The record gives the reactivity of an RNA of 207 nucleotides to DMS and 2A3. The RNA was probed in 150 mM KOAc, 10 mM MgCl2 and 150 mM bicine (pH 8.5) at 24 C. For 2A3 the reverse transcriptase was SuperScript II with manganese. Source: RMDB library OK3TST, as collected in RNAgym. The DMS profile rests on 6,582 reads.

RNA sequence: GGGAACGACUCGAGUAGAGUCGAAAAGGAGCUCCAGGACUACGUCACGUAUUUUGAAUUUGCCGGCAUGUGUACGGAUCUCCAGCCCAGCAACCACCUGUUCGCCUUUUUUUUCAAGCUCGUGGCGGCUAACUUUAGAAUCGUCAAGGAGAUCGCGAACAGUUCAAUUUUUCGAAAUUGAACUGUUAAAAGAAACAACAACAACAAC
Reactivity to DMS in 0.01 (KOAc 150mM, MgCl2 10mM, bicine 150mM(pH8.5), 24C), signal-to-noise 2, nucleotides 027 to 156: g000g010a110g000c040u000c030c020a120g000g000a100c030u000a030c020g020u010c020a090c060g050u000a060u030u000u020u020g010a100a140u010u000u000g030c030c050g010g020c040a070u000g020u010g030u000a100c040g000g000a090u000c010u000c030c010a140g020c020c000c030a150g020c020a070a080c020c020a050c040c040u010g020u000u000c040g000c030c010u000u000u000u000u000u000u000u000c070a070a100g000c040u000c040g020u000g010g030c020g010g010c040u000a030a100c080u000u010u000a120g010a090a110u000c050g010u010c040a070a100g000g010a060g010a080u010c030g020c080g010
Reactivity to 2A3 in 0.01 (KOAc 150mM, MgCl2 10mM, bicine 150mM(pH8.5), 24C), signal-to-noise 4, nucleotides 027 to 156: g020g000a020g020c020u010c030c020a030g070g060a030c070u090a010c090g060u060c050a020c050g080u100a120u080u190u090u160g130a140a090u060u060u110g090c080c070g020g050c060a060u060g030u020g030u120a070c040g030g010a030u020c020u000c010c010a030g000c000c010c000a000g010c020a040a070c030c030a030c020c030u040g040u090u110c050g060c000c020u090u030u050u050u040u030u040u200c060a080a040g020c010u030c050g040u000g000g000c000g010g000c020u060a060a070c030u110u140u110a050g020a090a080u080c060g020u030c060a030a040g020g000a030g010a050u060c070g000c010g100
For DMS the reverse transcriptase was MarathonRT.